The record gives the reactivity of an RNA of 207 nucleotides to 2A3 and DMS. The RNA was probed in 150 mM KOAc, 10 mM MgCl2 and 150 mM bicine (pH 8.5) at 24 C. The 2A3 profile rests on 12,489 reads. As a SHAPE reagent, 2A3 marks flexible, mostly unpaired nucleotides at the ribose 2'-OH. DMS adducts were read by reverse transcription with MarathonRT.

[RMDB]
RNA sequence: GGGAACGACUCGAGUAGAGUCGAAAACUGUAUGUUCGCAUACAGAGAAUUCCUAAGUCUUGCGGGAGUAGCCUAUAUGACAAUGAUGUCGGAAACGAUUGAGUCAUACGGCUACGACGAUCGCAAGAUAUGGACCGGGACUUGCUUCGGCAAGUAAAUAUAACUUACAAUUCGUUGUAAGUUAUAUAAAAGAAACAACAACAACAAC
Reactivity to 2A3 in 0.01 (KOAc 150mM, MgCl2 10mM, bicine 150mM(pH8.5), 24C), signal-to-noise 8, nucleotides 027 to 156: c000u000g000u010a000u000g040u050u100c290g000c110a000u010a000c010a000g030a010g050a060a170u130u040c010c000u030a100a020g010u000c000u010u010g000c000g010g000g010a010g010u000a000g000c000c010u190a190u020a010u300g010a000c000a050a190u250g080a060u160g030u010c010g040g030a100a070a080c010g010a000u000u070g030a020g010u000c000a000u010a020c040g000g000c000u000a000c000g000a000c010g020a000u010c000g000c000a000a000g000a000u030a030u040g020g010a020c030c050g060g030g050a020c000u000u010g010c010u030u080c150g110g000c010a010a000g020u050a000a120
Reactivity to DMS in 0.01 (KOAc 150mM, MgCl2 10mM, bicine 150mM(pH8.5), 24C), signal-to-noise 5, nucleotides 027 to 156: c010u000g010u000a000u000g010u000u010c300g050c020a020u000a000c000a020g010a150g010a130a150u000u000c010c000u010a100a300g010u000c000u000u000g000c010g020g000g010a160g040u000a010g030c000c000u000a100u000a020u000g000a020c000a080a060u000g010a070u000g000u000c010g020g000a160a140a280c010g010a010u000u000g000a060g020u010c010a020u000a010c230g010g020c000u000a010c000g010a080c130g010a070u000c010g010c010a020a020g010a010u000a120u010g000g010a070c090c040g000g010g000a090c020u000u000g000c010u000u010c300g040g000c020a020a020g010u000a020a080